Conditions: 150 mM KOAc, 10 mM MgCl2 and 150 mM bicine (pH 8.5), 24 C.
Structure probing data (2A3 and DMS) for a 207-nucleotide construct.
DMS adducts were read by reverse transcription with MarathonRT.
Reactivities are given for positions 27 through 156.
Reactivities are rounded to 0.1 and cut off at 0 and 3.
It was measured as part of the RMDB library OK3TST.
2A3 adducts were read by reverse transcription with SuperScript II with manganese.
[RMDB]
RNA sequence: GGGAACGACUCGAGUAGAGUCGAAAAUUCUCGGUGCAUGGCGAGACAUUUAGUGCGAAUUAAAGUUGUGGAAACACCGCUAGGAAGAAUAACAAGCAAUAUACUUCUUAAAGUUAAUUGCAGUUAUGAAGGAAUUCAUAGUUUUAGUUAAAACUGACGGAGUACGUAAUUUCGAUUACGUACUCCGAAAAGAAACAACAACAACAAC
Reactivity to 2A3 in 0.01 (KOAc 150mM, MgCl2 10mM, bicine 150mM(pH8.5), 24C), signal-to-noise 2, nucleotides 027 to 156: u060u000c000u000c020g050g040u100g000c080a030u050g070g010c020g040a020g060a050c040a050u160u130u160a150g000u080g030c040g060a090a060u090u110a110a020a040g010u020u010g010u010g050g010a010a040a040c030a020c020c010g080c100u100a040g010g090a040a070g060a150a010u020a040a000c070a170a000g030c020a000a000u030a020u040a040c000u030u080c030u110u210a270a140a000g020u010u020a160a040u060u010g000c010a000g000u020u030a010u050g090a090a020g050g060a010a030u110u040c030a050u110a090g010u070u000u030u120a030g020u070u150a000a160a000a010c020u060g000a000
Reactivity to DMS in 0.01 (KOAc 150mM, MgCl2 10mM, bicine 150mM(pH8.5), 24C), signal-to-noise 2, nucleotides 027 to 156: u010u000c010u000c000g020g020u030g000c080a130u030g010g020c110g010a060g020a080c080a120u010u000u000a100g030u010g050c080g000a140a080u000u000a080a070a140g020u000u010g040u000g040g010a120a130a140c020a130c000c040g040c020u000a080g000g020a150a070g000a220a070u010a030a050c040a020a200g030c010a020a060u000a210u010a110c010u000u000c160u000u000a020a020a200g000u000u000a140a140u000u000g030c020a300g010u010u000a010u010g020a110a040g000g000a070a140u000u000c020a040u010a050g000u000u020u000u000a110g010u010u000a070a000a100a090c030u000g010a240